[RMDB]
RNA sequence: GGGAACGACUCGAGUAGAGUCGAAAAGCGAUCAAUAAUAAGUCGACGACUCGAAAGAGUCUCAUGGAAACAUGCUUACUAAUGCGUCCAAUGUAGGUCGACGAUUAGGACGCAGAAGAUCGCGAAAAGGACUACCCUGAUUCGUCAGGGUAGUCCUAAAAGAAACAACAACAACAAC
Reactivity to 2A3 in 0.01 (KOAc 150mM, MgCl2 10mM, bicine 150mM(pH8.5), 24C), signal-to-noise 2, nucleotides 027 to 126: g000c000g000a000u020c060a000a010u180a300a090u110a200a010g020u000c000g000a000c000g000a000c000u000c030g020a040a000a000g010a000g000u000c010u000c000a010u010g030g010a070a000a000c000a000u050g000c060u270u110a050c060u060a000a260u000g050c000g000u000c010c000a060a070u300g020u080a030g080g000u020c000g010a000c000g010a000u000u000a020g010g010a000c000g060c000a000g000a020a000g030a000u050c040g000c000g000a050a080a000
Reactivity to DMS in 0.01 (KOAc 150mM, MgCl2 10mM, bicine 150mM(pH8.5), 24C), signal-to-noise 1, nucleotides 027 to 126: g000c000g000a000u000c050a220a050u020a010a230u000a040a060g000u000c020g000a070c070g000a030c000u000c000g000a070a140a300g000a000g000u040c000u100c010a080u000g020g000a140a070a070c140a040u000g010c000u000u010a130c110u080a080a010u010g000c000g000u000c000c000a030a040u000g000u040a030g010g080u000c010g000a030c000g000a040u020u000a210g010g000a040c120g000c000a070g000a070a010g010a000u000c050g020c000g000a030a110a050
An RNA of 177 nucleotides, treated with 2A3 and DMS and read out base by base.
For 2A3, 1,009 sequencing reads were counted.
The DMS profile rests on 1,305 reads.